[RMDB]
RNA sequence: GGGAACGACUCGAGUAGAGUCGAAAAGUUAUUUUCUCAAACCAGACCAAUGUAGUCUGUCAGACAGAUUUGCUACCUGUUGGAAUGCAUCGGAUCUUGAUGUUGGUGAGACCCUCUGGUCUUGCCAAUCACUACAUCCAUUCGUGGAUGUAGUGAUAAAAGAAACAACAACAACAAC
Reactivity to DMS in 0.01 (KOAc 150mM, MgCl2 10mM, bicine 150mM(pH8.5), 24C), signal-to-noise 9, nucleotides 027 to 126: g010u000u010a080u010u010u000u000c000u000c020a110a150a160c130c060a030g000a040c010c020a070a050u000g020u000a030g010u000c010u010g000u000c100a090g010a090c070a020g000a200u000u010u020g010c090u000a100c070c020u000g010u000u000g010g010a050a040u010g010c010a010u000c060g000g000a090u000c020u000u000g020a080u000g010u000u000g010g020u000g000a010g000a010c000c000c300u010c280u010g020g010u000c000u000u000g010c000c000a020
Reactivity to 2A3 in 0.01 (KOAc 150mM, MgCl2 10mM, bicine 150mM(pH8.5), 24C), signal-to-noise 5, nucleotides 027 to 126: g060u100u090a150u080u130u040u010c010u000c020a110a080a060c040c030a020g010a030c000c010a060a100u100g020u020a060g030u020c040u070g090u100c020a020g010a090c020a010g080a080u080u110u160g050c020u050a070c030c010u040g050u090u130g050g030a060a050u040g000c000a010u010c020g120g070a160u040c050u040u190g060a080u110g050u090u030g000g000u020g000a000g010a000c000c010c010u130c200u300g000g000u010c000u000u000g000c000c010a010
An RNA of 177 nucleotides, treated with DMS and 2A3 and read out base by base. DMS adducts were read by reverse transcription with MarathonRT. For 2A3 the reverse transcriptase was SuperScript II with manganese. The reactions ran in a buffer of 150 mM KOAc, 10 mM MgCl2 and 150 mM bicine (pH 8.5), at 24 C. The data come from the RNA Mapping Database (RMDB), library OK2TST.